[RMDB]
RNA sequence: GGGAACGACUCGAGUAGAGUCGAAAAGAUCAAUUAUGAUUGCAAUGUAAUAUGUCAAGGCAGACAUAUCUAGCUGUCGCCUUAGCUAGAGAUUGCCGAUUUAUUGCUUUCAUAAGACCGGCGAGAAGACUAUGGGACUGUUCGCAGUCCCAUAGUCAAAAGAAACAACAACAACAAC
Reactivity to 2A3 in 0.01 (KOAc 150mM, MgCl2 10mM, bicine 150mM(pH8.5), 24C), signal-to-noise 2, nucleotides 027 to 126: g090a140u160c050a010a130u020u000a000u040g000a000u000u020g000c020a020a000u050g050u250a060a040u070a050u220g240u210c100a060a090g030g000c000a000g060a190c040a090u110a050u050c010u010a010g030c000u000g090u090c060g160c070c050u070u040a000g000c010u010a000g010a030g000a060u130u010g010c000c010g020a030u000u080u080a030u000u000g000c000u020u010u010c010a020u010a010a010g040a010c060c040g030g000c040g040a130g020a210a020
Reactivity to DMS in 0.01 (KOAc 150mM, MgCl2 10mM, bicine 150mM(pH8.5), 24C), signal-to-noise 2, nucleotides 027 to 126: g010a080u000c070a110a130u010u000a010u000g010a010u000u020g010c010a010a000u000g000u010a050a060u010a060u000g010u010c220a110a100g000g020c030a050g010a080c180a100u000a130u000c010u000a000g010c010u000g010u000c160g030c170c090u010u010a040g020c000u000a000g010a010g010a130u000u000g000c030c000g000a090u000u000u010a030u000u000g000c010u000u000u000c010a010u010a010a020g000a120c090c070g020g010c060g020a140g010a090a190
Background:
Source: RMDB library OK2TRN, as collected in RNAgym. This 177-nucleotide RNA was probed chemically with 2A3 and DMS. 2A3 adducts were read by reverse transcription with SuperScript II with manganese. For 2A3, 1,259 sequencing reads were counted. As a SHAPE reagent, 2A3 marks flexible, mostly unpaired nucleotides at the ribose 2'-OH. The DMS profile rests on 1,711 reads.